Structure probing data (2A3 and DMS) for a 177-nucleotide construct. High 2A3 reactivity points to a flexible backbone, as in loops and unpaired stretches. DMS adducts were read by reverse transcription with MarathonRT. Source: RMDB library OK2TRN, as collected in RNAgym. The reactions ran in a buffer of 150 mM KOAc, 10 mM MgCl2 and 150 mM bicine (pH 8.5), at 24 C. Reactivities are given for positions 27 through 126.
RNA sequence: GGGAACGACUCGAGUAGAGUCGAAAAGCACAACCAGGACCCUGAGCAGACCUUGCAGGAGAUUCUGCCGGCGCUGGAGGCAGCUGUGGAGCAGAAGCAUGACCUCAACACCUGCUUUCUGCUGUGGGAAGGACUCUAAGUUCGCUUAGAGUCCUUCAAAAGAAACAACAACAACAAC
Reactivity to 2A3 in 0.01 (KOAc 150mM, MgCl2 10mM, bicine 150mM(pH8.5), 24C), signal-to-noise 2, nucleotides 027 to 126: g050c000a050c040a180a110c010c010a000g080g020a090c010c000c010u080g040a040g060c000a010g000a060c030c030u110u100g000c070a020g120g040a070g010a090u110u010c020u040g020c000c010g060g040c070g000c040u040g010g040a070g140g000c000a010g010c040u090g040u080g130g080a060g000c000a010g020a050a010g030c050a060u130g120a270c010c010u110c060a060a030c010a030c000c010u000g000c000u050u090u000c000u040g000c020u040g020u110g030g060
Reactivity to DMS in 0.01 (KOAc 150mM, MgCl2 10mM, bicine 150mM(pH8.5), 24C), signal-to-noise 4, nucleotides 027 to 126: g030c070a050c110a090a150c040c040a090g020g010a120c050c020c050u010g010a070g030c020a020g000a060c300c080u010u000g020c100a070g000g010a090g010a140u010u000c010u010g000c010c060g010g010c060g000c040u010g000g010a130g000g010c030a040g020c050u020g040u010g010g010a060g010c020a020g010a040a040g000c080a060u010g000a130c140c060u020c140a070a060c180a110c050c020u000g000c010u000u000u000c000u000g010c010u000g020u000g000g010